RNA sequence: GGGAACGACUCGAGUAGAGUCGAAAAGACAGAGCCAGAGAAGUGGGUCGAAGUGGGGCGUAAAGCAAGGACGGUCCAAGGGCGAGUCGACCUCCCUCAGCACGAGGACGUGCCUGAUUUUGAGUGGGGGAGGAUGUCACGGACAAAUUCUGUAACCGCUUAUGUUCAUGUUCGCAUGAACAUAAGCAAAAGAAACAACAACAACAAC
Reactivity to 2A3 in 0.01 (KOAc 150mM, MgCl2 10mM, bicine 150mM(pH8.5), 24C), signal-to-noise 5, nucleotides 027 to 156: g030a010c050a010g040a010g030c040c020a010g030a020g040a220a020g090u060g010g000g050u050c030g040a080a020g030u100g020g040g000g000c040g040u100a100a080a030g040c040a020a050g040g030a020c050g020g020u000c010c030a040a040g040g010g000c030g000a000g020u030c010g050a060c020c010u050c000c000c000u020c020a040g010c020a010c040g040a120g120g140a080c040g030u020g020c000c030u190g070a270u090u110u110u170g130a110g050u140g010g000g000g000g000a000g000g020a010u050g030u010c030a010c120g030g000a020c040a050a110a040u130u040c050u040g070u080a080a110c050c050
Reactivity to DMS in 0.01 (KOAc 150mM, MgCl2 10mM, bicine 150mM(pH8.5), 24C), signal-to-noise 1, nucleotides 027 to 156: g030a170c090a100g010a160g010c030c070a190g010a190g000a070a060g000u020g010g000g010u000c030g000a080a100g060u000g010g000g000g030c070g020u020a030a030a120g000c050a080a100g040g030a060c100g010g050u020c050c030a060a100g020g010g070c060g000a190g000u000c060g000a160c010c050u000c000c000c000u000c030a070g000c020a090c050g010a180g030g010a190c050g030u000g010c000c050u010g020a090u000u000u010u000g010a100g020u000g050g000g000g020g030a060g010g010a030u000g020u010c060a090c020g020g020a100c070a090a050a130u000u000c000u010g000u000a090a150c120c200

Overview: This 207-nucleotide RNA was probed chemically with 2A3 and DMS. For DMS the reverse transcriptase was MarathonRT. The data come from the RNA Mapping Database (RMDB), library VIROID. DMS (dimethyl sulfate) methylates the pairing face of unpaired adenines and cytosines. Conditions: 150 mM KOAc, 10 mM MgCl2 and 150 mM bicine (pH 8.5), 24 C.